[RMDB]
The data come from the RNA Mapping Database (RMDB), library OK1LIB. Structure probing data (DMS and 2A3) for a 177-nucleotide construct. For 2A3, 77,621 sequencing reads were counted. For 2A3 the reverse transcriptase was SuperScript II with manganese. The reactions ran in a buffer of 150 mM KOAc, 10 mM MgCl2 and 150 mM bicine (pH 8.5), at 24 C. Reactivities are given for positions 27 through 126. 2A3 is a SHAPE reagent: it acylates the 2'-hydroxyl of flexible nucleotides of all four kinds.

RNA sequence: GGGAACGACUCGAGUAGAGUCGAAAAAGAGCGGUGAUUACUUCUGAGUCUGAAAAGACUCUACUACCUUCAUCGUUCAAUUGUUUACUUCAUGUUAAGAAGGUAGUAGACGUGAAGUAAGCUGAUAGAUUCACUUAGUAUUCGUACUGGGUGAAUCAAAAGAAACAACAACAACAAC
Reactivity to DMS in 0.01 (KOAc 150mM, MgCl2 10mM, bicine 150mM(pH8.5), 24C), signal-to-noise 9, nucleotides 027 to 126: a090g010a020g000c010g000g010u010g000a070u010u010a020c070u010u020c050u000g000a050g010u000c010u010g000a110a080a130a010g000a010c000u000c010u010a020c040u010a020c050c020u010u010c010a030u000c030g010u010u000c030a070a070u020u010g010u010u000u000a060c040u000u000c070a090u020g010u010u010a080a200g000a050a040g010g010u010a020g010u000a040g000a090c180g010u000g000a010a010g000u000a000a010g010c020u000g000a090u020a100
Reactivity to 2A3 in 0.01 (KOAc 150mM, MgCl2 10mM, bicine 150mM(pH8.5), 24C), signal-to-noise 9, nucleotides 027 to 126: a000g070a010g010c020g000g020u040g020a070u040u060a040c030u060u060c040u080g030a010g000u000c000u010g040a040a040a020a020g000a000c000u000c000u010a010c000u010a000c000c000u000u000c010a040u030c030g080u060u030c020a050a060u100u060g040u040u040u040a100c010u020u060c030a050u070g020u060u080a140a080g020a050a020g080g030u030a020g020u010a040g070a090c090g060u060g010a000a000g000u000a000a000g000c020u030g020a080u060a180